This 177-nucleotide RNA was probed chemically with 2A3 and DMS.
Values cover nucleotides 27 to 126.
DMS adducts were read by reverse transcription with MarathonRT.
The data come from the RNA Mapping Database (RMDB), library OK2TRN.
[RMDB]
RNA sequence: GGGAACGACUCGAGUAGAGUCGAAAACAAGGAAACUGAGCAGUGCAGGGCCUUACCAGCCCCAACCAUCUGGGGGCCACCCUGGCUGGCACCAGCAGGAGGGUGGGCUGGCUUCUCAGAGGUCUGGUCCGUUACUGAAAUUCGUUUCAGUAACGGAAAAAGAAACAACAACAACAAC
Reactivity to 2A3 in 0.01 (KOAc 150mM, MgCl2 10mM, bicine 150mM(pH8.5), 24C), signal-to-noise 3, nucleotides 027 to 126: c070a020a040g120g030a090a080a120c050u060g010a030g040c040a020g040u030g160c020a020g030g010g020c030c010u040u050a040c000c010a000g020c000c000c000c000a030a050c010c010a140u090c050u070g020g000g000g090g000c010c000a010c010c030c030u060g160g010c030u000g030g040c030a130c080c000a030g110c020a020g020g150a040g040g040g040u100g000g020g000c030u010g010g000c010u160u020c010u010c000a030g020a010g040g040u000c020u050g030g030
Reactivity to DMS in 0.01 (KOAc 150mM, MgCl2 10mM, bicine 150mM(pH8.5), 24C), signal-to-noise 6, nucleotides 027 to 126: c130a070a080g010g000a060a110a090c050u000g010a060g000c050a060g010u000g020c080a080g000g000g020c020c020u010u000a100c030c050a140g000c040c010c000c060a120a060c030c010a090u010c040u000g010g000g010g010g000c010c020a020c040c080c080u010g010g010c130u000g000g010c110a100c090c020a040g010c110a070g000g000a050g020g010g010u000g000g020g010c070u000g010g000c110u000u000c020u000c030a060g010a070g000g000u000c050u000g010g010
For 2A3, 5,450 sequencing reads were counted.